[RMDB]
The record gives the reactivity of an RNA of 207 nucleotides to 2A3. Values cover nucleotides 27 to 156. The RNA was probed in 150 mM KOAc, 10 mM MgCl2 and 150 mM bicine (pH 8.5) at 24 C.

RNA sequence: GGGAACGACUCGAGUAGAGUCGAAAACAUAGCGUUUCACAAUGUGCGCCAUUAACAUUGUUUAUUCAAGCACGUUUCGCAAUGUACGGCGCAGAAACAUUGCCAACACAAAUACGCUUCACGAUGUAAAACAUCGGUGCGUUCGCGCACCGAUGAACCUACCUCGAGAGUUCGCUCUCGAGGUAGGAAAAGAAACAACAACAACAAC
Reactivity to 2A3 in 0.01 (KOAc 150mM, MgCl2 10mM, bicine 150mM(pH8.5), 24C), signal-to-noise 1, nucleotides 027 to 156: c060a020u160a000g000c010g000u000u130u210c100a020c010a030a050u000g020u040g000c000g000c060c010a110u160u160a030a030c000a020u020u000g060u000u140u140a140u070u120c130a120a020g110c060a040c090g050u020u050u040c030g000c000a000a010u000g010u000a020c050g040g000c000g030c010a000g030a010a070a000c000a000u010u020g040c080c080a150a100c040a090c030a160a240a010u110a020c040g010c000u080u150c120a110c150g100a060u180g000u230a010a050a030a080c020a010u000c000g000g030u000g000c000g000u020u000c120g000c000g000c060a000c000c050g010a000u000g000a000a000